[RMDB]
RNA sequence: GGGAACGACUCGAGUAGAGUCGAAAAGCAAAUAUUGUCUUAAUUACUUAGGCUAAACGAAAUAAGUAUUAAAGCGGGACAAGGCAUCGACAUUUGAUACAAAUAUUGAUCAAUGGAUGUCUUAUUUAAACCUCAUCCGGCUUCGGCCGGAUGAGAACAUGAGAUCUAUCUUCGGAUAGAUCUCAUGAAAAGAAACAACAACAACAAC
Reactivity to DMS in 0.01 (KOAc 150mM, MgCl2 10mM, bicine 150mM(pH8.5), 24C), signal-to-noise 1, nucleotides 027 to 156: g000c080a040a070a090u030a050u000u010g000u000c060u010u010a060a080u010u010a010c040u010u020a040g000g030c060u000a060a130a300c060g020a140a050a110u000a030a030g000u010a040u010u010a000a070a070g040c070g000g030g050a040c030a010a030g010g030c020a010u000c010g020a170c040a030u000u000u000g040a030u000a140c070a050a060a180u000a090u000u020g000a110u000c020a050a030u000g020g000a060u010g020u000c000u000u000a060u000u010u000a020a030a120c080c000u000c010a010u000c000c000g000g000c010u010u000c300g110g030c020c000g040g000a000u000g010a000g030a020a100
Reactivity to 2A3 in 0.01 (KOAc 150mM, MgCl2 10mM, bicine 150mM(pH8.5), 24C), signal-to-noise 3, nucleotides 027 to 156: g010c010a070a080a020u120a110u090u100g010u040c020u030u100a120a110u120u070a040c010u040u030a030g070g000c050u230a120a150a010c050g020a010a050a080u030a050a010g020u010a010u020u120a090a080a010g070c110g050g000g040a030c050a030a000g010g000c020a000u000c010g110a160c040a050u050u050u140g010a020u120a090c110a050a190a050u270a130u170u290g010a000u010c000a000a000u000g010g000a000u000g000u000c000u000u010a030u010u040u090a030a030a010c010c000u000c000a000u000c000c020g020g000c010u000u070c200g090g000c000c000g000g000a000u000g000a000g000a000a000